RNA sequence: GGGAACGACUCGAGUAGAGUCGAAAACUGCAUCACAUGAUCACUGAUGGCUCAACGGUAUCCGGCGGUACAACUGAAUACUUGUAGCUGCCUUUUGAGCGGGUUGGCUGCAAUCCGAAACGGAGAGAAAACCUAAUUACGUUCGCGUAAUUAGGAACGGAGCGAUUAAGUUCGCUUAAUCGCUCCGAAAAGAAACAACAACAACAAC
Reactivity to 2A3 in 0.01 (KOAc 150mM, MgCl2 10mM, bicine 150mM(pH8.5), 24C), signal-to-noise 2, nucleotides 027 to 156: c020u010g020c000a020u020c010a000c000a070u130g020a070u050c010a000c040u030g000a020u040g110g000c080u020c050a060a190c040g080g040u080a060u140c020c020g050g000c050g020g040u040a050c050a100a000c050u130g070a120a140u110a140c070u040u000g000u020a020g000c040u020g000c040c000u060u070u180u080g140a080g000c130g000g000g050u240u290g080g000c000u020g000c030a000a010u000c010c010g040a140a120a120c140g050g000a020g000a000g070a050a140a000a010c000c000u000a000a000u000u000a010c000g010u030u050c130g000c000g140u000a000a000u000u010a000g040g010a010a000
The data come from the RNA Mapping Database (RMDB), library M2RFPK. The record gives the reactivity of an RNA of 207 nucleotides to 2A3. The reactions ran in a buffer of 150 mM KOAc, 10 mM MgCl2 and 150 mM bicine (pH 8.5), at 24 C. For 2A3 the reverse transcriptase was SuperScript II with manganese.